Record summary:
Structure probing data (2A3 and DMS) for a 177-nucleotide construct. The data come from the RNA Mapping Database (RMDB), library TTRDES. For 2A3, 13,520 sequencing reads were counted. Values cover nucleotides 27 to 126. For DMS, 9,828 sequencing reads were counted.

[RMDB]
RNA sequence: GGGAACGACUCGAGUAGAGUCGAAAAGAUAUGGAUCGUUCAAGGGAGCUGAAGGGUCGGAAACGACCCGGCAGCAUCGAUCUUGACGAUCCUAAGUCAAAACGACCGCUAGUUCGCUAGCGGUCGAUCUUUGUAAUGAGUUCGCUCAUUACAAAGAAAAAGAAACAACAACAACAAC
Reactivity to 2A3 in 0.01 (KOAc 150mM, MgCl2 10mM, bicine 150mM(pH8.5), 24C), signal-to-noise 3, nucleotides 027 to 126: g010a000u040a010u100g000g000a000u010c010g060u300u080c070a010a000g040g060g010a260g020c010u010g020a040a040g000g010g010u010c000g000g020a040a010a010c000g000a000c000c020c000g000g000c010a010g010c000a050u300c090g050a070u010c000u010u000g010a000c000g000a000u010c000c000u000a010a000g000u000c010a000a000a110a220c030g000a010c000c000g000c010u020a000g030u080u110c300g010c300u010a010g010c000g000g010u000c000g000a000
Reactivity to DMS in 0.01 (KOAc 150mM, MgCl2 10mM, bicine 150mM(pH8.5), 24C), signal-to-noise 5, nucleotides 027 to 126: g010a030u000a240u010g000g010a000u000c000g010u000u010c010a020a010g010g010g020a070g030c010u000g000a050a040g010g010g010u000c000g030g010a030a040a110c010g010a010c000c000c000g010g030c010a010g010c000a260u000c240g000a070u000c010u000u000g000a030c000g000a000u000c000c000u000a000a070g000u000c010a080a070a170a250c030g010a010c000c000g030c010u000a000g010u000u020c300g030c000u010a000g020c010g010g000u000c000g000a010

High DMS reactivity at an A or C suggests that its Watson-Crick edge is free.